Chemical mapping of a 207-nucleotide RNA with 2A3. The data come from the RNA Mapping Database (RMDB), library M2RFPK. The RNA was probed in 150 mM KOAc, 10 mM MgCl2 and 150 mM bicine (pH 8.5) at 24 C.
RNA sequence: GGGAACGACUCGAGUAGAGUCGAAAAGUUUAUGCAAAGGCACUUCGCAAUGUUUGCUCAAACAUUGCUUAUUCAAACACGCUUCACAAUGUGCGACAAAGAAACAUUGUUAUAAGAGCUAAUGUUUACCACGCCUAAAGGUUCGCCUUUAGGCGAAUCCACCGUUAACGUUCGCGUUAACGGUGGAAAAAGAAACAACAACAACAAC
Reactivity to 2A3 in 0.01 (KOAc 150mM, MgCl2 10mM, bicine 150mM(pH8.5), 24C), signal-to-noise 1, nucleotides 027 to 156: g000u060u100u060a160u110g020c000a000a000a200g110g000c020a010c020u080u040c080g030c010a000a000u010g000u010u000u110g050c020u040c070a000a000a000c000a000u000u020g000c040u060u090a200u100u070c010a040a120a020c070a000c050g040c010u000u050c020a000c000a000a000u020g000u000g010c040g120a120c030a070a160a020g100a030a010a000c000a030u000u000g030u040u040a150u060a200a000g020a000g000c010u010a060a040u020g000u010u030u010a100c050c060a030c010g000c000c000u000a000a000a000g020g000u000u120c180g110c020c000u000u000u000a000g000g010c000g000a000a000